[RMDB]
RNA sequence: GGGAACGACUCGAGUAGAGUCGAAAAGAGGCUGAGGCUGGCGGACCGCUUGAGCUCAGGGGUUCUGGGCUGCAGUGGACUAUGCCGAUCGGGUGUCCGCACUAAGUUCGGUAUCGAUAUGGUGCUCCUGGGGGAGCCUUGGACUACCAGGUCGUCUACUAUCCAUCCAGUUCGCUGGAUGGAUAGUAAAAGAAACAACAACAACAAC
Reactivity to 2A3 in 0.01 (KOAc 150mM, MgCl2 10mM, bicine 150mM(pH8.5), 24C), signal-to-noise 1, nucleotides 027 to 156: g120a020g010g010c020u020g000a010g050g000c010u030g040g010c010g010g050a040c010c010g000c040u060u110g110a030g020c000u000c030a000g000g090g070g010u200u110c020u040g000g000g010c000u110g000c020a020g020u030g030g030a020c030u060a030u090g020c000c000g010a010u010c000g050g010g040u020g050u020c010c050g120c030a020c010u040a130a140g110u040u000c000g010g050u070a100u170c030g010a010u020a050u190g050g010u100g020c020u020c000c030u080g000g000g010g000g020a060g020c030c000u010u070g020g010a010c020u070a070c030c010a020g020g030u030c020g000u020c020u000
Background: Structure probing data (2A3) for a 207-nucleotide construct. Reactivities are rounded to 0.1 and cut off at 0 and 3. The data come from the RNA Mapping Database (RMDB), library ARCHII. The 2A3 profile rests on 801 reads. Values cover nucleotides 27 to 156.